Description:
This 177-nucleotide RNA was probed chemically with 2A3 and DMS. 2A3 adducts were read by reverse transcription with SuperScript II with manganese. DMS adducts were read by reverse transcription with MarathonRT. The reactions ran in a buffer of 150 mM KOAc, 10 mM MgCl2 and 150 mM bicine (pH 8.5), at 24 C. Reactivities are given for positions 27 through 126.
RNA sequence: GGGAACGACUCGAGUAGAGUCGAAAAGGGAUAUUGUUCGCAAUAUCCCAAAAGGAACCAGGCUCGGUGCCUGAGAACUGAAUAGCUAAUACGGAAGCUAAAAAACCACGGAGUUCGCUCCGUGGAAUCUUCUAGAUCUGUUCGCAGAUCUAGAAGAAAAAGAAACAACAACAACAAC
Reactivity to 2A3 in 0.01 (KOAc 150mM, MgCl2 10mM, bicine 150mM(pH8.5), 24C), signal-to-noise 1, nucleotides 027 to 126: g010g000g000a000u000a000u000u000g000u020u060c130g000c080a040a000u020a010u000c000c000c000a000a010a000a010g000g000a010a020c000c010a000g010g000c030u060c180g300g050u300g020c010c030u030g000a060g020a170a030c020u040g000a070a010u040a070g000c020u090a050a040u130a160c060g130g100a050a070g040c010u070a040a060a000a030a090a030c010c010a000c020g000g020a010g020u060u050c130g040c080u000c000c000g000u000g000g000a000a010
Reactivity to DMS in 0.01 (KOAc 150mM, MgCl2 10mM, bicine 150mM(pH8.5), 24C), signal-to-noise 2, nucleotides 027 to 126: g030g030g000a010u000a000u000u010g000u000u010c240g020c030a020a000u000a010u010c000c000c000a020a010a040a050g010g010a090a210c100c010a030g000g010c020u010c270g030g010u010g000c010c000u000g000a080g010a130a230c040u040g040a060a080u010a010g000c000u010a070a080u010a120c210g000g010a100a030g010c000u010a000a090a100a090a040a130c020c000a010c020g010g000a000g000u000u000c240g010c000u000c000c000g010u000g000g000a040a020